[RMDB]
RNA sequence: GGGAACGACUCGAGUAGAGUCGAAAAUCGGACUGGUUCGCCAGUCCGAAAAUAACGGUCCGUGCUUGGAGCUGAUUGUAAAUGCUAACUGGCCUUACAUCAAAAGCCCGGACUUCGGUCCGGGCAACAUUGAAGGUUCGUUCGCGAACCUUCAAUGAAAAGAAACAACAACAACAAC
Reactivity to DMS in 0.01 (KOAc 150mM, MgCl2 10mM, bicine 150mM(pH8.5), 24C), signal-to-noise 1, nucleotides 027 to 126: u000c000g010g000a010c000u010g010g010u000u010c170g040c000c000a040g030u000c010c000g000a000a040a040a060u000a080a180c170g000g000u000c010c010g000u000g010c080u000u020g010g060a070g030c090u020g000a040u000u000g010u010a030a090a100u000g010c010u000a100a090c170u000g000g000c010c150u000u050a030c070a070u010c040a120a050a180a100g000c000c000c060g010g000a030c000u000u010c130g010g000u000c000c000g050g010g000c000a010a010
Structure probing data (DMS) for a 177-nucleotide construct. The reactions ran in a buffer of 150 mM KOAc, 10 mM MgCl2 and 150 mM bicine (pH 8.5), at 24 C. Source: RMDB library M2PK50, as collected in RNAgym. The DMS profile rests on 706 reads. For DMS the reverse transcriptase was MarathonRT.